Notes:
The record gives the reactivity of an RNA of 177 nucleotides to 2A3 and DMS. It was measured as part of the RMDB library OK1LIB. Values are in units of 0.01, from 0 to 300, in steps of 10. Conditions: 150 mM KOAc, 10 mM MgCl2 and 150 mM bicine (pH 8.5), 24 C.
RNA sequence: GGGAACGACUCGAGUAGAGUCGAAAAGGUUGCGGCAAUGGAUGAUGCGGAUCACCGCCUAUGCCGACCGGCUGCUCGACGACCUGGAUGUGCUGGAUUGGCCUGAGCAGGUCAAGACCAUGCAGCGCACUGCGGAAUGUUUCGACAUUCCGCAGUGAAAAGAAACAACAACAACAAC
Reactivity to 2A3 in 0.01 (KOAc 150mM, MgCl2 10mM, bicine 150mM(pH8.5), 24C), signal-to-noise 7, nucleotides 027 to 126: g080g000u090u110g080c020g000g000c040a100a150u170g060g060a100u160g060a080u150g070c070g050g040a060u090c030a050c180c000g010c000c000u080a090u070g000c000c000g000a010c020c000g020g000c000u010g000c000u020c040g040a050c040g010a030c000c010u030g070g050a140u100g060u050g060c020u020g010g140a200u130u110g020g020c000c000u080g030a140g160c140a020g030g000u020c010a010a000g030a060c010c000a040u210g000c010a000g030c020g010
Reactivity to DMS in 0.01 (KOAc 150mM, MgCl2 10mM, bicine 150mM(pH8.5), 24C), signal-to-noise 7, nucleotides 027 to 126: g000g000u010u000g020c050g010g000c020a110a180u030g000g000a110u020g000a050u020g020c220g010g000a110u020c160a040c060c050g000c020c030u010a170u000g000c020c000g000a120c110c040g000g010c010u000g010c020u000c070g000a070c080g010a030c010c010u000g000g010a110u010g010u020g020c010u010g000g000a300u030u040g000g000c000c000u000g010a250g030c090a020g000g010u000c000a030a050g000a110c080c040a050u030g000c000a040g000c070g010